Chemical mapping of a 177-nucleotide RNA with DMS and 2A3.
RNA sequence: GGGAACGACUCGAGUAGAGUCGAAAACUAUUUAUAGACAGAACAGUGGAAAACGUAUAUCGCUAUAAACCUUAUACCCCGAAUCUUCCAGUCGUACCAUUCCACAUAGGCGAGGCAUAAGCGAAAGAGCCAGUAUUAGUUUCGACUAAUACUGGCUAAAAGAAACAACAACAACAAC
Reactivity to DMS in 0.01 (KOAc 150mM, MgCl2 10mM, bicine 150mM(pH8.5), 24C), signal-to-noise 3, nucleotides 027 to 126: c040u010a140u010u010u000a120u000a010g000a050c100a110g010a060a100c100a020g000u000g030g000a050a080a040a070c030g000u030a130u020a030u000c050g010c030u020a090u030a050a040a080c090c060u000u010a070u020a130c010c040c020c020g010a060a040u000c060u010u000c040c040a070g010u010c020g010u000a090c020c070a090u000u000c030c000a020c080a080u000a110g030g000c070g000a050g000g010c080a060u010a060a160g010c050g000a050a070a100g020
Reactivity to 2A3 in 0.01 (KOAc 150mM, MgCl2 10mM, bicine 150mM(pH8.5), 24C), signal-to-noise 3, nucleotides 027 to 126: c000u000a070u020u100u070a180u040a030g070a050c040a020g100a150a000c000a050g040u100g020g070a080a150a010a000c030g070u050a020u010a020u110c000g030c000u030a020u050a180a100a070c030c010u140u080a060u100a140c040c000c030c030g050a020a050u050c020u050u010c020c000a040g010u030c000g020u030a030c010c030a050u050u020c030c010a030c020a020u090a020g000g070c020g000a010g020g020c000a020u040a110a010g070c010g070a060a100a090g110

The RNA was probed in 150 mM KOAc, 10 mM MgCl2 and 150 mM bicine (pH 8.5) at 24 C. 2A3 adducts were read by reverse transcription with SuperScript II with manganese. For 2A3, 2,023 sequencing reads were counted. It was measured as part of the RMDB library OK1LIB.